[RMDB]
Conditions: 150 mM KOAc, 10 mM MgCl2 and 150 mM bicine (pH 8.5), 24 C. This 207-nucleotide RNA was probed chemically with 2A3. 2A3 adducts were read by reverse transcription with SuperScript II with manganese. Reactivities are given for positions 27 through 156.

RNA sequence: GGGAACGACUCGAGUAGAGUCGAAAACCGUAGGGUCUUUGUCAGUUGCGGUAGUACUAUAAUCGAUCUUUCGAAAGAGAGAUCGGUAGUACUACCCGCAACUUGGAUUUAAGACCCUAAACGGAAAGCUUGUCCCCGCUUCGGCGGGGACAAGCAAGCAAUAGUGAUGGUUCGCCAUCACUAUUGCAAAAGAAACAACAACAACAAC
Reactivity to 2A3 in 0.01 (KOAc 150mM, MgCl2 10mM, bicine 150mM(pH8.5), 24C), signal-to-noise 1, nucleotides 027 to 156: c000c000g000u010a040g020g000g010u000c010u040u020u000g020u040c020a030g000u000u000g000c010g000g000u000a000g030u000a000c020u020a030u090a160a300u210c000g000a000u000c000u000u000u000c010g090a130a070a040g010a000g010a000g000a000u000c030g010g000u060a030g000u070a000c000u030a000c040c000c030g000c030a000a010c000u000u090g040g000a030u050u150u300a010a000g000a000c010c000c010u020a010a020a000c010g010g040a140a070a000g000c000u000u020g000u000c010c020c000c000g010c010u070u030c190g040g070c030g000g130g040g000a000c000a000a000g010c000a000a000